Description:
This 207-nucleotide RNA was probed chemically with 2A3 and DMS. The reactions ran in a buffer of 150 mM KOAc, 10 mM MgCl2 and 150 mM bicine (pH 8.5), at 24 C. The data come from the RNA Mapping Database (RMDB), library M2RFPK.
RNA sequence: GGGAACGACUCGAGUAGAGUCGAAAAGUUCCCUCUUAGCGUGGAGGUUUAACUACGCUCGUUCCACAUAUCGGUGUGGGCGCACCGGAUUUAUAAAUCAAAGUCCUUUAGGGAACGGAAAGGAACAAAAAUCCAUGGGAGUUCGCUCCCAUGGAAAGUUGAAAUUAAUCUUCGGAUUAAUUUCAACAAAAGAAACAACAACAACAAC
Reactivity to 2A3 in 0.01 (KOAc 150mM, MgCl2 10mM, bicine 150mM(pH8.5), 24C), signal-to-noise 3, nucleotides 027 to 156: g020u030u020c000c000c000u000c040u010u050a010g000c010g000u010g000g030a050g040g040u210u230u160a090a040c010u030a000c000g010c020u010c010g010u020u010c040c010a100c040a190u120a130u170c010g000g000u000g000u030g010g000g010c030g000c020a000c000c000g030g000a030u010u300u090a180u220a090a030a030u090c150a030a030a030g010u010c020c000u020u060u120a060g030g000g020a010a020c020g000g020a110a090a010g070g020a050a050c050a050a120a050a020a040u000c000c000a010u000g000g000g000a000g000u010u020c050g030c040u000c010c000c010a000u000g000g000a010a010a010
Reactivity to DMS in 0.01 (KOAc 150mM, MgCl2 10mM, bicine 150mM(pH8.5), 24C), signal-to-noise 2, nucleotides 027 to 156: g010u000u010c000c000c020u010c040u000u000a040g040c030g050u000g010g010a130g020g010u000u010u000a100a150c010u000a020c020g030c010u000c010g020u000u010c010c000a140c090a140u010a090u000c090g020g030u010g040u000g020g010g030c080g020c030a050c010c010g010g000a270u020u010u000a080u010a070a110a080u010c090a060a090a130g030u010c010c020u000u000u010a110g020g000g010a060a060c020g000g010a050a050a070g010g010a060a110c050a040a090a070a140a180u010c000c010a010u000g000g010g010a050g030u000u000c300g020c000u000c020c000c000a010u010g000g010a000a010a000

Reactivities are given for positions 27 through 156. The 2A3 profile rests on 2,464 reads.